[RMDB]
RNA sequence: GGGAACGACUCGAGUAGAGUCGAAAACGCAGUUGAGCGUCACACUGAAGCUUGGUCGUCUUCGGGAGACGUCGAAAAUCGAAGAAGACUAGCUUCUCCCGUGGGAUGCCGUGACCGCGCGUGACGCGCGGUGCACCCCGUUCGCGGGGUGCACCGCAAAAGAAACAACAACAACAAC
Reactivity to DMS in 0.01 (KOAc 150mM, MgCl2 10mM, bicine 150mM(pH8.5), 24C), signal-to-noise 2, nucleotides 027 to 126: c070g000c070a040g000u000u000g000a110g000c000g020u010c000a000c030a100c090u000g000a040a040g020c030u000u060g040g010u030c000g000u000c000u020u020c000g030g020g010a200g170a100c070g000u000c130g010a020a020a060a050u000c040g000a030a050g000a070a110g000a010c040u010a080g000c010u000u000c000u010c130c160c120g020u020g030g000g000a050u000g040c010c050g000u000g000a130c020c010g000c070g020c240g040u000g020a050c080g000c030
Reactivity to 2A3 in 0.01 (KOAc 150mM, MgCl2 10mM, bicine 150mM(pH8.5), 24C), signal-to-noise 4, nucleotides 027 to 126: c060g010c050a040g010u060u090g090a040g010c010g000u000c000a000c000a010c030u050g030a020a000g020c030u180u220g100g000u070c010g000u000c010u010u010c010g000g040g030a110g080a090c100g130u180c040g060a070a040a040a110u080c040g000a020a020g010a090a000g010a030c010u020a000g040c020u020u010c010u030c000c030c010g000u070g000g000g010a040u140g050c050c020g050u080g080a060c000c000g010c000g020c040g070u010g010a040c010g000c010